[RMDB]
RNA sequence: GGGAACGACUCGAGUAGAGUCGAAAACAGACCUAAUGAGCCACAUACCUACCCAAGGUGAAAGCUCCUUCUCUCGCAAUGUGUAACUCAUGAUUCUCAUGACCCCUGGUUGGAGAGAUCCGGACUAUAGACUAGAGGGUGUUCGCACCCUCUAGAAUCUUAUGGUUUACUUCGGUAAACCAUAAGAAAAAGAAACAACAACAACAAC
Reactivity to DMS in 0.01 (KOAc 150mM, MgCl2 10mM, bicine 150mM(pH8.5), 24C), signal-to-noise 2, nucleotides 027 to 156: c000a110g030a100c030c030u010a090a120u000g000a000g020c040c040a100c080a150u000a080c050c010u000a100c060c040c030a120a110g030g040u000g000a080a070a100g000c050u000c030c050u000u000c020u020c000u000c040g040c030a030a060u010g030u030g000u000a030a060c050u010c000a030u010g020a090u000u000c160u000c020a050u000g000a190c050c010c020c010u000g020g030u000u020g000g010a040g000a020g020a050u000c020c040g040g010a140c080u010a080u000a150g000a190c000u000a010g020a040g010g040g020u000g010u000u010c280g020c070a060c000c000c010u000c010u000a000g020a020a080
Reactivity to 2A3 in 0.01 (KOAc 150mM, MgCl2 10mM, bicine 150mM(pH8.5), 24C), signal-to-noise 2, nucleotides 027 to 156: c020a010g070a070c020c030u130a120a050u120g010a000g020c020c000a040c000a120u170a040c030c000u030a030c010c000c010a030a030g000g010u040g030a080a000a010g000c030u020c000c000u100u010c000u000c000u030c030g090c100a000a060u060g110u000g020u140a110a050c030u000c010a000u030g020a050u290u010c090u030c110a010u080g030a100c020c000c010c100u100g100g010u040u030g030g000a010g010a010g000a000u060c050c040g000g000a030c040u040a060u090a300g100a060c000u000a000g000a000g000g000g020u000g010u020u010c050g030c050a000c000c000c000u000c000u000a000g000a000a000
Chemical mapping of a 207-nucleotide RNA with DMS and 2A3. 2A3 adducts were read by reverse transcription with SuperScript II with manganese. The RNA was probed in 150 mM KOAc, 10 mM MgCl2 and 150 mM bicine (pH 8.5) at 24 C. The DMS profile rests on 2,960 reads. It was measured as part of the RMDB library M2RFPK.